[RMDB]
RNA sequence: GGGAACGACUCGAGUAGAGUCGAAAACGGGACGAUGAUCGGCGCGGGUAUCUUCGUCUUUCCGGGGCUGGCGGCGGAGCAGGCCGGACCUGCGGCGUCGGUUUCGUUCGCCAUCGGUGCCGUCGUCUCAUUAUAUACUGUUCGCAGUAUAUAAUGAAAAAGAAACAACAACAACAAC
Reactivity to DMS in 0.01 (KOAc 150mM, MgCl2 10mM, bicine 150mM(pH8.5), 24C), signal-to-noise 7, nucleotides 027 to 126: c160g010g000g000a020c020g010a040u000g010a050u000c080g020g010c040g020c050g010g000g010u010a050u000c040u000u000c030g010u000c030u000u000u000c050c020g000g010g010g020c180u000g010g010c050g010g010c020g000g000a100g020c040a060g000g010c040c070g010g000a170c100c090u000g010c050g010g000c030g010u010c030g010g010u000u000u000c030g010u000u000c030g010c010c010a080u000c100g010g020u000g000c020c010g010u000c070g010u000c070
Reactivity to 2A3 in 0.01 (KOAc 150mM, MgCl2 10mM, bicine 150mM(pH8.5), 24C), signal-to-noise 6, nucleotides 027 to 126: c030g030g010g030a000c010g020a020u060g010a020u070c030g060g020c050g040c050g070g040g040u130a040u030c020u050u030c020g020u010c000u020u060u020c020c000g020g000g010g010c060u040g000g010c010g010g010c020g010g020a020g020c030a030g030g030c030c040g060g050a140c020c030u110g050c040g050g000c030g040u090c030g020g000u040u100u150c010g000u100u150c020g010c030c010a060u060c040g030g040u080g060c020c010g040u050c030g070u020c010
Structure probing data (DMS and 2A3) for a 177-nucleotide construct. The DMS profile rests on 48,452 reads. The RNA was probed in 150 mM KOAc, 10 mM MgCl2 and 150 mM bicine (pH 8.5) at 24 C. For 2A3, 22,617 sequencing reads were counted. It was measured as part of the RMDB library OK2TRN. For DMS the reverse transcriptase was MarathonRT.